[RMDB]
RNA sequence: GGGAACGACUCGAGUAGAGUCGAAAAUGUUCGGAUGAAUGCGCGCCUCGAAGUUGCGGUUGCCCGACAGCACGGCCGCCGCGACGAUGUCGUUCUUCGUGAUCGCUUCGUUCAGCUCGGGCGUGAACGUCAUCCCCUACUUCGGUAGGGGAUGACGAAAAGAAACAACAACAACAAC
Reactivity to 2A3 in 0.01 (KOAc 150mM, MgCl2 10mM, bicine 150mM(pH8.5), 24C), signal-to-noise 1, nucleotides 027 to 126: u200g030u010u090c050g130g110a160u200g030a070a070u130g100c030g000c020g010c000c020u160c060g080a150a020g020u080u090g000c000g030g000u000u020g070c020c030c010g100a180c090a060g150c150a060c080g000g000c000c000g000c020c000g000c000g020a000c000g000a000u040g170u130c020g020u000u000c000u050u040c180g080u240g050a040u030c010g000c010u050u010c010g000u060u080c060a010g020c060u000c030g020g000g020c010g020u010g020a090a030
Reactivity to DMS in 0.01 (KOAc 150mM, MgCl2 10mM, bicine 150mM(pH8.5), 24C), signal-to-noise 1, nucleotides 027 to 126: u010g030u000u000c020g020g020a140u010g010a030a060u010g010c160g030c000g030c090c030u000c080g000a050a060g040u000u010g030c100g000g000u000u010g000c060c000c020g010a090c170a150g020c060a130c240g000g030c000c110g000c010c000g000c030g000a060c000g000a010u000g000u020c010g000u000u000c000u000u000c200g030u000g000a030u000c030g000c050u010u000c010g010u000u000c200a300g000c070u000c070g030g000g000c000g070u000g020a060a080